The data come from the RNA Mapping Database (RMDB), library RSTRND. Chemical mapping of a 207-nucleotide RNA with 2A3.
[RMDB]
RNA sequence: GGGAACGACUCGAGUAGAGUCGAAAAAACAUCCCAGGACGUCAUCGCUUAUAGGCUGCUCCGUUCACCAGAGCUCACUGGUGUUCGGCUAAGAUUAAAGAGCUCGCCUCUUGCACCCUGACCUUCGGGUCGCUUGAGGUUAAAUCAAUAGAAGGACCGUGUUGUUAACGUUCGCGUUAACAACACGAAAAGAAACAACAACAACAAC
Reactivity to 2A3 in 0.01 (KOAc 150mM, MgCl2 10mM, bicine 150mM(pH8.5), 24C), signal-to-noise 1, nucleotides 027 to 156: a000a000c030a030u010c030c000c000a010g040g060a010c040g000u070c050a100u150c140g040c130u250u230a100u080a300g110g040c010u000g000c010u010c000c000g010u000u000c000a010c000c000a000g020a090g050c000u010c020a240c030u050g000g000u000g000u000u000c010g000g020c010u010a000a000g100a220u250u300a260a160a000g000a010g040c060u000c000g000c010c000u010c010u010u030g010c000a000c000c000c020u020g030a030c010c000u010u010c000g010g000g000u010c010g000c000u000u000g010a000g000g000u010u020a000a000a000u060c000a000a000u000a000g020a020a000g000g000a000c010
Values cover nucleotides 27 to 156.